Structure probing data (DMS and 2A3) for a 177-nucleotide construct.
For 2A3, 752 sequencing reads were counted.
Conditions: 150 mM KOAc, 10 mM MgCl2 and 150 mM bicine (pH 8.5), 24 C.
DMS adducts were read by reverse transcription with MarathonRT.
RNA sequence: GGGAACGACUCGAGUAGAGUCGAAAACACUGAGUCCUGAUGGUACCACUAUACCUGGGCAGGGUGACAGAGUGAGACCCUGUCUCAAAAAAACAAUGAAAAAGAAAGAAUGGAAGGUGGCAUGUGGACUGCCUCCUUCAUUCGUGAAGGAGGCAGUAAAAGAAACAACAACAACAAC
Reactivity to DMS in 0.01 (KOAc 150mM, MgCl2 10mM, bicine 150mM(pH8.5), 24C), signal-to-noise 1, nucleotides 027 to 126: c090a130c110u030g000a210g000u000c010c000u010g030a110u000g010g010u000a160c110c070a030c080u000a090u000a090c020c000u010g010g000g010c000a030g000g030g070u030g000a180c070a040g010a090g010u010g000a180g000a040c020c020c030u000g000u000c010u000c000a000a000a030a100a000a070a060c130a050a040u000g000a090a100a080a050a050g000a110a090a080g000a070a090u010g000g000a030a070g000g000u000g000g030c010a080u000g010u020g000g000
Reactivity to 2A3 in 0.01 (KOAc 150mM, MgCl2 10mM, bicine 150mM(pH8.5), 24C), signal-to-noise 1, nucleotides 027 to 126: c050a010c070u110g020a000g030u050c000c000u000g040a050u030g010g140u050a060c000c010a070c020u070a050u030a130c030c000u010g000g010g000c000a000g040g030g020u040g090a010c120a050g300a040g140u280g090a080g040a020c000c000c000u010g040u010c010u020c040a090a100a010a000a010a000a000c040a090a050u150g150a120a150a010a000a060g140a020a040a010g090a040a000u070g000g020a000a040g080g050u030g010g030c000a000u100g020u060g040g030

Overview:
2A3 adducts were read by reverse transcription with SuperScript II with manganese.